[RMDB]
Structure probing data (DMS) for a 177-nucleotide construct. It was measured as part of the RMDB library OK2TRN.
RNA sequence: GGGAACGACUCGAGUAGAGUCGAAAAAUAGCGGUUGAUCGCAACCGCGCGCUUGCCCGCGCGGCCGGCGAACUCGGCGACGCACGCGAAAUCGCGCGUCACCGCGCAGCCCUUCACGAUCGUCGUAUAAAUGGGUCGAGUUCGCUCGACCCAUUUAAAAAGAAACAACAACAACAAC
Reactivity to DMS in 0.01 (KOAc 150mM, MgCl2 10mM, bicine 150mM(pH8.5), 24C), signal-to-noise 1, nucleotides 027 to 126: a070u030a070g010c020g010g000u000u000g000a050u000c090g010c070a120a130c000c010g030c000g010c010g070c010u000u000g000c130c100c010g000c050g020c010g010g030c080c170g010g000c000g000a060a200c050u000c020g010g020c010g010a000c030g020c030a020c000g000c040g070a060a050a190u000c070g010c020g000c000g020u010c110a030c060c040g000c030g010c050a300g030c050c040c080u000u020c160a080c000g020a080u000c080g000u000c020g010u000a170